[RMDB]
RNA sequence: GGGAACGACUCGAGUAGAGUCGAAAAGCGUACUACUCUCGUUAAGGAGCCUAAUCGCUAUGGAGGGACUCUCCCAAAUAGGAGAGUCCGCCAUAGCGAUGGCUCCUACACGAGAGUAUCGCAAAUACAUUCUUACGGUUCGCCGUAAGAAUGUAAAGUCCCCUAUUGUGUUCGCACAAUAGGGGACAAAAGAAACAACAACAACAAC
Reactivity to 2A3 in 0.01 (KOAc 150mM, MgCl2 10mM, bicine 150mM(pH8.5), 24C), signal-to-noise 2, nucleotides 027 to 156: g020c000g040u110a080c040u000a000c000u040c000u010c020g010u000u060a100a040g010g000a000g000c020c040u210a240a040u020c000g010c000u000a000u000g020g060a180g120g020g000a000c020u000c000u060c010c000c030a230a300a130u300a170g020g000a000g010a030g020u050c040c000g000c040c010a000u040a000g000c020g000a000u000g010g010c000u000c000c000u000a000c000a000c000g000a000g000a000g000u000a000u000c020g010c010a000a030a000u060a000c000a000u000u000c000u010u000a000c020g000g070u020u090c300g030c090c000g000u000a000a000g000a010a000u000g000u010a000a000a000
This 207-nucleotide RNA was probed chemically with 2A3. The RNA was probed in 150 mM KOAc, 10 mM MgCl2 and 150 mM bicine (pH 8.5) at 24 C. The data come from the RNA Mapping Database (RMDB), library RNAMAK. For 2A3, 2,138 sequencing reads were counted. High 2A3 reactivity points to a flexible backbone, as in loops and unpaired stretches.